Annotation: Source: RMDB library OK3TST, as collected in RNAgym. An RNA of 207 nucleotides, treated with 2A3 and read out base by base. The reactions ran in a buffer of 150 mM KOAc, 10 mM MgCl2 and 150 mM bicine (pH 8.5), at 24 C. 2A3 is a SHAPE reagent: it acylates the 2'-hydroxyl of flexible nucleotides of all four kinds.

[RMDB]
RNA sequence: GGGAACGACUCGAGUAGAGUCGAAAACAGGGCGUUUCGAUAGGCCCAUUUUACUAUCGAGAUUACAUCGUGGGAGACCACGUAGAGACCGCAACUGCUGGGUCGAUGAACAGCAGAGUUACACCGCAUUUCGUUGCGCGGGAUGAAGCAACGUACAGCUAGGGCAUGAUUUCGAUCAUGCCCUAGCAAAAGAAACAACAACAACAAC
Reactivity to 2A3 in 0.01 (KOAc 150mM, MgCl2 10mM, bicine 150mM(pH8.5), 24C), signal-to-noise 1, nucleotides 027 to 156: c020a010g000g000g000c000g050u000u160u000c020g000a000u000a000g000g030c000c000c010a000u080u210u090u030a000c000u000a010u000c030g010a020g000a020u040u300a060c030a050u140c010g000u000g000g000g050a180g040a030c000c000a000c000g040u000a060g000a000g000a000c000c000g040c130a000a130c010u000g000c000u000g000g000g140u010c130g210a260u190g060a030a000c000a000g000c000a000g000a010g050u150u140a030c060a050c060c000g060c100a070u000u180u000c000g000u000u000g010c000g000c010g010g020g000a100u030g020a000a000g000c000a000a000c000g020u040a130c060a070